Background
Structure probing data (2A3) for a 207-nucleotide construct. The 2A3 profile rests on 789 reads. As a SHAPE reagent, 2A3 marks flexible, mostly unpaired nucleotides at the ribose 2'-OH.
[RMDB]
RNA sequence: GGGAACGACUCGAGUAGAGUCGAAAAGGCGUAGCCGACAACAUGCCCAGGUAGCCCAGACCUUCAAGGCUACGGUGCGUUGCGACGCACGGUAUGAUUCUUCACAACGACGUUCACCGCGUCUUCUACAACCGGCAAAGAUUCGUCUUUGCCGGAACGAGUUGAAUGACUUCGGUCAUUCAACUCGAAAAGAAACAACAACAACAAC
Reactivity to 2A3 in 0.01 (KOAc 150mM, MgCl2 10mM, bicine 150mM(pH8.5), 24C), signal-to-noise 2, nucleotides 027 to 156: g050g000c010g020u020a000g010c040c000g090a030c000a160a000c000a060u050g010c030c010c000a000g040g060u050a080g010c000c000c010a080g100a070c010c000u100u060c150a110a070g000g000c000u010a010c010g000g010u000g000c010g000u050u100g060c210g120a010c000g000c010a000c000g000g020u080a030u070g080a070u150u080c070u210u190c130a080c050a300a080c110g020a000c000g100u160u270c140a120c080c000g060c010g000u000c000u050u020c050u100a100c010a150a120c000c000g010g000c030a000a010a010g000a010u090u030c110g030u020c060u000u030u000g000c000c000g000g000a000a000